[RMDB]
Annotation:
An RNA of 177 nucleotides, treated with DMS and read out base by base. For DMS, 548 sequencing reads were counted. The RNA was probed in 150 mM KOAc, 10 mM MgCl2 and 150 mM bicine (pH 8.5) at 24 C. Values cover nucleotides 27 to 126.
RNA sequence: GGGAACGACUCGAGUAGAGUCGAAAAUGAAAAUUUAAACUGGUGGGGCAGUGUCUAGGAUUGACGUUAGACACUGCUUUUUGCCCGUUUCAAACAGGUGAAUACAAACCGUCAUUAAAUAAAAAAACCUAUAUAGCAGAUUCGUCUGCUAUAUAGGAAAAGAAACAACAACAACAAC
Reactivity to DMS in 0.01 (KOAc 150mM, MgCl2 10mM, bicine 150mM(pH8.5), 24C), signal-to-noise 1, nucleotides 027 to 126: u000g000a120a070a080a100u000u000u010a020a040a000c110u020g010g040u000g010g010g020g020c000a010g040u020g000u000c000u000a000g000g010a200u020u000g010a120c220g000u000u000a030g010a000c000a000c000u000g000c000u000u000u000u020u000g010c000c000c030g010u050u000u020c170a060a040a070c090a020g010g020u000g030a010a030u030a300c170a090a020a040c050c040g010u000c040a070u000u010a010a020a120u030a010a010a180a180a110a120a150